RNA sequence: GGGAACGACUCGAGUAGAGUCGAAAAGAUAUGGACAUACACCUCUUGGAUUUACACAGAAAUCUCACAAUAUUCGGAAACGAAUAUUGUGAGACACUGUGUUGUCAGAGGUGUAUGUCCUAAGUCAUCCUAGGGAAUACUUCGGUAUUCCCUAGGAAAAAGAAACAACAACAACAAC
Reactivity to DMS in 0.01 (KOAc 150mM, MgCl2 10mM, bicine 150mM(pH8.5), 24C), signal-to-noise 1, nucleotides 027 to 126: g000a050u000a300u000g000g010a020c000a000u000a000c010a000c000c000u000c000u010u000g030g010a040u020u010u000a040c000a020c010a000g000a090a230a300u000c000u010c000a000c000a000a010u000a000u000u000c000g000g000a120a130a210c000g000a000a000u000a000u000u000g000u010g010a000g000a000c230a110c010u000g020u000g010u000u000g010u000c000a010g000a000g020g010u000g000u010a000u000g000u000c000c000u010a000a060g030u000c020a170